Description: Structure probing data (2A3) for a 207-nucleotide construct. It was measured as part of the RMDB library RNAMAK.

RNA sequence: GGGAACGACUCGAGUAGAGUCGAAAAUCCUAAGUCGCUCCGAUGUUCGCGUUGAUCGUAUGGGUCCCUCGUAUCGGAAACGAUACGAGAAACCAUACGGGAGCGAACUACCGGAGCGAUAUGGAAAAACGAACUGUUACUUCGGUAACAGUUCGAACACAGUCGUUGAGUUCGCUCAACGACUGUGAAAAGAAACAACAACAACAAC
Reactivity to 2A3 in 0.01 (KOAc 150mM, MgCl2 10mM, bicine 150mM(pH8.5), 24C), signal-to-noise 1, nucleotides 027 to 156: u030c000c000u020a060a000g010u010c000g010c000u020c000c000g000a010u030g000u000u000c000g000c000g080u090u020g010a030u010c000g000u000a000u000g000g020g080u150c050c010c000u000c010g000u000a000u000c010g030g000a040a010a060c010g000a000u000a000c000g000a000g000a010a010a000c000c010a000u000a000c010g000g010g000a010g010c000g010a000a000c000u020a040c000c020g000g010a000g000c000g000a000u000a000u000g040g050a060a050a010a010a030c010g000a000a000c000u000g000u000u000a000c010u030u100c300g140g000u000a000a000c000a000g000u000u000c000g000a000a000